[RMDB]
RNA sequence: GGGAACGACUCGAGUAGAGUCGAAAAGCGUACAUGAUGAAGCGUUGGAUCACUUGUUUGAUGAUAUUGUACAAGGUGACGUACAAGCAUCUUUUAAAAAAUACCAUCAGUUUAUAACAGAGGGUAAGUCCGAUGUCCUGUUCGCAGGACAUCGGACAAAAGAAACAACAACAACAAC
Reactivity to 2A3 in 0.01 (KOAc 150mM, MgCl2 10mM, bicine 150mM(pH8.5), 24C), signal-to-noise 1, nucleotides 027 to 126: g010c150g040u100a000c030a150u240g010a260u210g190a040a030g000c000g130u000u140g040g080a000u020c000a100c110u000u150g160u190u300u150g040a000u000g030a010u100a150u130u040g000u100a000c100a060a010g050g100u000g160a140c000g000u000a010c050a000a000g130c000a000u000c000u060u120u070u150a000a030a000a000a000a000u010a000c000c000a040u090c000a040g190u200u140u000a010u110a230a000c050a000g060a000g080g000g010u000a010a010